About this RNA: The record gives the reactivity of an RNA of 207 nucleotides to 2A3. The reactions ran in a buffer of 150 mM KOAc, 10 mM MgCl2 and 150 mM bicine (pH 8.5), at 24 C.
RNA sequence: GGGAACGACUCGAGUAGAGUCGAAAAAGCUUUUUCUGCAGGCUGUAUUCCUUGUGGCACAUCAAAAAUUCUAGGAAGUACAGACACUAUCUUGCUAGGCAGUAAUUGUAUAGCAGGAAGUGAAAGUAAUGGAAAUGUGCCUUACCUGCAGCAAAAACUCCCUGAUACGUUUCGACGUAUCAGGGAGAAAAGAAACAACAACAACAAC
Reactivity to 2A3 in 0.01 (KOAc 150mM, MgCl2 10mM, bicine 150mM(pH8.5), 24C), signal-to-noise 1, nucleotides 027 to 156: a000g120c080u130u050u000u010u000c000u000g000c010a020g000g000c020u160g050u200a130u090u060c020c070u050u120g090u060g000g010c020a020c000a010u030c120a050a010a140a080a110u220u000c020u080a040g100g080a090a040g050u000a040c010a010g170a000c000a000c000u100a300u160c000u000u000g000c010u040a030g080g000c000a020g000u230a300a130u170u000g010u000a020u010a030g040c000a000g000g000a010a000g010u000g000a090a010a000g030u020a100a000u030g000g110a100a000a000u010g000u000g000c000c030u000u050a010c000c000u000g020c010a000g020c020a000a000a000a000a010